[RMDB]
RNA sequence: GGGAACGACUCGAGUAGAGUCGAAAAGCGCUGGGCGGUCCGUUGGUGGUGGUCAACCACCGCAGAGCUGAACGCAGCCGAGGUUAGAUGAACGAAGAGGGCCUGUAGGUCGCACUCAUCGCGCGGCGGCCGUUAAAGGGUUCGCCCUUUAACGGCCAAAAGAAACAACAACAACAAC
Reactivity to 2A3 in 0.01 (KOAc 150mM, MgCl2 10mM, bicine 150mM(pH8.5), 24C), signal-to-noise 2, nucleotides 027 to 126: g000c010g000c080u120g030g040g030c000g000g000u000c010c040g030u050u170g050g020u000g010g020u020g020g190u300c080a070a080c050c010a000c000c020g040c010a010g000a020g000c010u000g010a080a020c070g000c080a010g110c000c000g010a110g040g030u030u060a040g030a090u140g140a070a010c010g010a110a000g090a150g150g000g000c000c000u070g070u010a040g060g000u010c010g030c010a040c000u060c020a170u100c050g000c000g040c000g060g030c000
Reactivity to DMS in 0.01 (KOAc 150mM, MgCl2 10mM, bicine 150mM(pH8.5), 24C), signal-to-noise 2, nucleotides 027 to 126: g010c080g050c050u010g030g000g000c050g000g020u020c070c010g080u000u000g020g010u050g010g020u000g000g010u060c290a120a120c030c010a010c030c000g000c020a010g030a090g000c020u020g010a090a080c130g000c070a080g000c020c010g000a030g010g060u010u000a090g000a040u040g010a060a170c120g030a040a060g020a080g010g000g000c000c020u030g000u000a030g000g010u010c050g000c020a060c130u000c040a080u070c160g000c140g030c000g000g020c090
Source: RMDB library OK1LIB, as collected in RNAgym. Chemical mapping of a 177-nucleotide RNA with 2A3 and DMS. In probing experiments dimethyl sulfate is read out at A N1 and C N3, which are open when not base-paired. 2A3 adducts were read by reverse transcription with SuperScript II with manganese. 2A3 is a SHAPE reagent: it acylates the 2'-hydroxyl of flexible nucleotides of all four kinds.